The record gives the reactivity of an RNA of 207 nucleotides to 2A3. For 2A3, 559 sequencing reads were counted. Conditions: 150 mM KOAc, 10 mM MgCl2 and 150 mM bicine (pH 8.5), 24 C. Source: RMDB library M2RFPK, as collected in RNAgym. For 2A3 the reverse transcriptase was SuperScript II with manganese.
RNA sequence: GGGAACGACUCGAGUAGAGUCGAAAACAAUCAACAAUAUGGUUUGUGUAGUUAUGCUGAAAAUCGUUGAGGUUGUAUGGAAUAGGUUAACCGUAACACCUUAAGUUGAAAAACUUUAAAAUUAAUCAAAAUCAUGUACACUUCGGUGUACAUGAAACUAUGGUACACGCUUCGGCGUGUACCAUAGAAAAGAAACAACAACAACAAC
Reactivity to 2A3 in 0.01 (KOAc 150mM, MgCl2 10mM, bicine 150mM(pH8.5), 24C), signal-to-noise 2, nucleotides 027 to 156: c010a000a040u110c010a000a110c030a150a220u100a030u240g030g050u060u060u160g090u030g010u000a080g030u060u120a070u110g100c080u130g040a100a030a070a060u060c040g000u020u030g040a030g070g000u020u030g000u020a090u080g080g030a070a130u010a170g020g020u020u020a030a030c080c000g040u020a000a060c010a000c140c000u010u000a040a000g000u000u020g040a000a050a000a000a020c030u040u120u210a020a060a020a060u220u150a060a010u090c030a150a000a000a220u000c000a000u010g010u000a000c030a000c010u000u040c130g050g000u000g010u000a000c000a000u000g020a000a000a000